[RMDB]
RNA sequence: GGGAACGACUCGAGUAGAGUCGAAAACAGUACCCGAACCGGUCCUACUCCCCAAGAGGCCAUCCCCAAGGGAGCUCAUGCUGCGGGGCCCUGAGCAAGCCCUCUGCUGGCGCCUAUCAAACGACACCCCUGAUUAGGUCUUCGGACCUAAUCAGGGAAAAGAAACAACAACAACAAC
Reactivity to 2A3 in 0.01 (KOAc 150mM, MgCl2 10mM, bicine 150mM(pH8.5), 24C), signal-to-noise 2, nucleotides 027 to 126: c030a020g090u110a090c020c000c010g000a030a070c040c030g000g040u020c000c020u040a080c050u070c000c020c020c010a030a030g030a050g090g000c020c010a080u060c000c020c010c010a070a090g010g030g020a020g020c030u050c100a090u150g000c040u050g010c050g000g010g020g000c000c000c000u030g010a030g020c010a050a000g000c000c000c000u020c010u020g010c020u020g000g000c000g030c040c000u160a150u160c060a110a070a020c030g040a020c000a070c030